[RMDB]
RNA sequence: GGGAACGACUCGAGUAGAGUCGAAAAACAACAGAUAGCUGGAACCAGCGUAGAAUUCUACGCAUAUCCAUAGCGAAUGGUACCUGUAAAGAAAAUAAGCUUGGAUGUACAAGUACCAACAGCCGAGCAUGCCAUGGUGAUGUCAAUCACAUAUGCACCAUAAUGCCUGAUUCGUCAGGCAUUAUGGAAAAGAAACAACAACAACAAC
Reactivity to 2A3 in 0.01 (KOAc 150mM, MgCl2 10mM, bicine 150mM(pH8.5), 24C), signal-to-noise 4, nucleotides 027 to 156: a000c020a010a000c030a000g120a140u130a030g020c030u030g040g020a070a120c060c010a040g010c000g000u000a000g040a170a270u300u080c010u000a000c000g000c030a020u050a030u050c010c000a020u110a060g040c040g080a050a030u040g020g000u020a030c000c010u030g040u110a080a080a080g080a050a160a010a020u160a140a000g020c020u030u070g010g020a010u040g020u040a030c020a030a080g010u000a030c000c030a000a060c020a040g030c000c040g000a020g020c010a030u050g010c030c000a010u060g020g060u010g020a020u020g110u180c060a110a140u020c010a010c000a020u100a030u090g010c030a020
Reactivity to DMS in 0.01 (KOAc 150mM, MgCl2 10mM, bicine 150mM(pH8.5), 24C), signal-to-noise 1, nucleotides 027 to 156: a030c020a100a220c030a070g000a060u010a090g030c000u030g030g010a060a050c250c090a120g020c000g070u020a020g020a300a110u000u000c010u000a010c010g000c010a180u000a060u000c020c050a210u000a070g010c000g020a200a120u000g010g030u000a030c000c030u000g030u010a050a180a070g020a220a110a080a260u000a050a130g000c140u000u000g070g000a180u000g030u000a010c020a110a050g030u000a050c000c000a040a080c050a100g000c000c000g000a060g030c010a100u000g000c000c030a010u000g020g040u000g040a000u000g000u030c210a120a150u000c010a010c030a000u000a030u000g000c080a220
The record gives the reactivity of an RNA of 207 nucleotides to 2A3 and DMS. It was measured as part of the RMDB library OK3TST. For DMS the reverse transcriptase was MarathonRT. The DMS profile rests on 1,809 reads. For 2A3, 2,305 sequencing reads were counted. In probing experiments dimethyl sulfate is read out at A N1 and C N3, which are open when not base-paired.